The record gives the reactivity of an RNA of 170 nucleotides to 2A3 and DMS. The data come from the RNA Mapping Database (RMDB), library 15KLIB. DMS (dimethyl sulfate) methylates the pairing face of unpaired adenines and cytosines. For DMS the reverse transcriptase was MarathonRT.
[RMDB]
RNA sequence: GGGAACGACUCGAGUAGAGUCGAAAACCCUAGCCAGGGAUUGUCUUCCUCAAGUUUCUUGAUUUUCUUCUUCGCCUUCCGGAGCUCCUUCUCGAGAUCCUCAGCUUUUUUCCUUGAGUUCACCCACCUAACUGCACGUUCGCGUGCAGUAAAAGAAACAACAACAACAAC
Reactivity to 2A3 in 0.01 (KOAc 150mM, MgCl2 10mM, bicine 150mM(pH8.5), 24C), signal-to-noise 6, nucleotides 027 to 129: c020c000c010u010a030g050c030c060a030g030g000g040a030u070u110g040u030c020u060u030c030c000u050c050a090a070g030u010u050u010c000u030u080g080a160u090u050u040u020c010u090u000c000u040u030c020g030c000c000u030u050c020c020g010g010a030g010c010u020c000c000u070u060c030u020c010g050a050g010a050u030c000c000u030c010a030g030c030u080u040u000u020u060u040c000c000u030u030g020a010g010u060u060c020a080c010c000c000a040c020c020u030a050
Reactivity to DMS in 0.01 (KOAc 150mM, MgCl2 10mM, bicine 150mM(pH8.5), 24C), signal-to-noise 6, nucleotides 027 to 129: c060c010c030u050a070g040c080c120a100g020g030g000a080u000u000g020u030c050u000u000c000c000u000c130a010a000g010u000u000u000c070u020u000g040a180u040u020u040u020c030u070u020c090u010u030c040g020c090c060u020u020c040c040g040g020a040g040c030u000c000c000u000u040c040u030c100g090a130g040a080u020c010c010u020c040a070g010c050u010u000u020u020u010u010c060c050u020u010g030a100g030u040u030c110a180c030c030c020a100c110c110u030a070